Conditions: 150 mM KOAc, 10 mM MgCl2 and 150 mM bicine (pH 8.5), 24 C. Structure probing data (2A3) for a 207-nucleotide construct. For 2A3 the reverse transcriptase was SuperScript II with manganese.
RNA sequence: GGGAACGACUCGAGUAGAGUCGAAAACUAAUACUCAAUUUGAAAAUAAAUUCGUACAUAAUAUCAUAUGAGUAACCGUGGUUCAUACUUGAGUACCACGAAGGAAUACAGAAAUCUCGAGCGACAAAUCGCCUUGGGAUCAAAACCGGGGGCGUUCUCAAUAACCCGAAUUCGUUCGGGUUAUUGAAAAAGAAACAACAACAACAAC
Reactivity to 2A3 in 0.01 (KOAc 150mM, MgCl2 10mM, bicine 150mM(pH8.5), 24C), signal-to-noise 1, nucleotides 027 to 156: c000u040a080a060u010a070c000u000c040a070a200u060u030u140g040a060a020a040a040u280a070a120a120u220u140c000g010u080a040c090a180u180a100a020u090a110u180c020a010u040a050u120g000a000g030u020a060a140c050c000g020u020g000g000u030u120c050a000u120a230c000u090u120g080a000g010u000a000c000c000a000c000g000a000a040g000g070a040a030u140a230c140a100g100a040a010a000u040c000u000c000g020a010g050c020g040a050c040a200a120a150u070c000g020c000c000u010u020g060g000g040a000u090c050a030a080a030a000c000c000g000g000g000g000g040c020g020u060u100c030
Values cover nucleotides 27 to 156. The 2A3 profile rests on 508 reads. The data come from the RNA Mapping Database (RMDB), library OK3TST.